[RMDB]
RNA sequence: GGGAACGACUCGAGUAGAGUCGAAAACUGAGAGGGGGCUUCCAUUAUUCCGUUUGAGGAAACUGAGGCUCACUGAGGCUCAAAUGAGAACUGGCCCCAGGUCACUCUGCUCUUGAAGCUAGAUUUCCUCAUGCUGCAGUGGCUUGUCUUGCCUUCAAAUGACCAUGAUAUUCGUAUCAUGGUCAUUAAAAGAAACAACAACAACAAC
Reactivity to DMS in 0.01 (KOAc 150mM, MgCl2 10mM, bicine 150mM(pH8.5), 24C), signal-to-noise 1, nucleotides 027 to 156: c050u030g020a110g010a120g000g040g000g050g030c030u000u000c030c040a090u000u000a080u000u000c050c000g010u010u000u000g030a070g000g000a020a040a110c120u010g010a080g020g000c070u000c020a060c040u010g020a130g020g010c030u010c010a030a090a110u000g020a190g000a100a070c060u000g020g000c020c020c040c020a040g030g020u010c000a130c020u000c000u010g000c010u000c040u000u000g010a090a060g000c050u010a100g010a210u000u000u010c020c020u010c040a120u010g000c000u000g000c030a090g020u010g010g020c060u030u000g010u000c060u010u000g000c060c020u000u010c030a090
Reactivity to 2A3 in 0.01 (KOAc 150mM, MgCl2 10mM, bicine 150mM(pH8.5), 24C), signal-to-noise 1, nucleotides 027 to 156: c070u100g040a070g030a060g080g090g000g000g000c010u050u020c040c010a060u050u050a080u150u020c060c020g090u070u040u090g210a110g000g050a020a030a000c010u060g030a030g050g070c000u000c140a130c070u040g010a020g010g030c060u040c180a080a080a100u230g010a180g020a180a000c090u040g010g000c000c000c050c000a000g000g000u080c000a040c000u020c010u040g040c010u080c010u100u200g040a040a000g020c030u020a060g030a300u050u050u000c030c010u010c000a000u040g000c010u000g000c000a040g080u010g060g000c040u000u050g000u010c040u020u030g050c000c000u090u100c010a040